[RMDB]
RNA sequence: GGGAACGACUCGAGUAGAGUCGAAAAGAGGGCACUCCGGGCCGUAAGGAAGAAAAGCACCCAGAGGGAGGAAGCCACACAGGGGUUUGCAGAGAAAUCACCUCCAGAGGACCCCUUCAGCGAACAGUAAGUCUCGACUUCGGUCGAGACAAAAGAAACAACAACAACAAC
Reactivity to 2A3 in 0.01 (KOAc 150mM, MgCl2 10mM, bicine 150mM(pH8.5), 24C), signal-to-noise 1, nucleotides 027 to 129: g040a020g000g000g000c010a000c040u010c000c040g000g010g000c000c000g030u100a000a050g000g020a020a020g000a020a050a000a020g030c010a020c020c000c000a020g010a030g000g010g000a000g000g000a000a040g000c000c000a080c000a000c000a040g040g000g020g000u010u000u080g060c080a030g050a030g000a060a160a060u140c020a120c000c000u010c050c000a000g030a050g060g000a020c000c000c000c020u000u070c000a010g050c000g000a000a000c020a010g070u090a120a030
Reactivity to DMS in 0.01 (KOAc 150mM, MgCl2 10mM, bicine 150mM(pH8.5), 24C), signal-to-noise 3, nucleotides 027 to 129: g000a070g000g040g030c160a100c050u000c080c000g010g000g060c030c040g040u020a060a040g060g010a020a130g010a080a090a030a110g060c050a180c060c000c040a120g030a160g040g010g000a000g030g000a000a000g020c000c000a040c000a120c210a040g000g010g010g030u000u010u240g100c300a120g000a110g050a000a000a010u020c070a140c090c040u010c020c110a180g000a030g000g000a060c150c000c020c030u020u010c110a160g070c090g040a000a000c030a080g010u070a060a130
The record gives the reactivity of an RNA of 170 nucleotides to 2A3 and DMS. For DMS the reverse transcriptase was MarathonRT. 2A3 is a SHAPE reagent: it acylates the 2'-hydroxyl of flexible nucleotides of all four kinds. The reactions ran in a buffer of 150 mM KOAc, 10 mM MgCl2 and 150 mM bicine (pH 8.5), at 24 C. For 2A3, 2,616 sequencing reads were counted. 2A3 adducts were read by reverse transcription with SuperScript II with manganese.